[RMDB]
RNA sequence: GGGAACGACUCGAGUAGAGUCGAAAAUGUGGAGAGCAUGGGAGUUGGCGGACACAUGAGAGUUCCACCAUGAACCUCGUCCAGCCCACUCUCAUCUCAUCCGCCCGCUCGAGAGGUCGCGAUCGUCUAGACAUGUGGGAUUCGUCCCACAUGUCUAAAAAGAAACAACAACAACAAC
Reactivity to DMS in 0.01 (KOAc 150mM, MgCl2 10mM, bicine 150mM(pH8.5), 24C), signal-to-noise 3, nucleotides 027 to 126: u000g030u030g000g000a060g000a020g010c220a020u000g020g010g020a010g000u000u000g010g020c010g000g010a010c010a280c280a150u080g000a000g000a140g030u000u000c000c300a120c300c300a060u030g010a000a020c020c000u000c010g010u000c000c000a190g010c010c030c070a000c000u020c000u000c000a040u000c010u010c010a050u000c000c000g020c000c010c020g000c060u000c040g000a050g030a140g000g000u000c010g010c040g010a100u020c070g000u000c100
Reactivity to 2A3 in 0.01 (KOAc 150mM, MgCl2 10mM, bicine 150mM(pH8.5), 24C), signal-to-noise 3, nucleotides 027 to 126: u160g010u040g020g010a010g000a010g000c160a020u000g000g000g000a000g000u000u000g000g030c010g000g000a000c040a010c020a300u300g000a000g000a010g010u010u000c040c060a140c020c020a090u250g010a000a000c000c000u000c010g000u000c010c000a030g000c000c000c000a000c000u000c000u000c000a000u000c000u010c000a170u000c000c010g030c000c000c000g000c000u030c010g090a100g000a020g040g040u060c020g020c020g050a100u070c050g060u020c090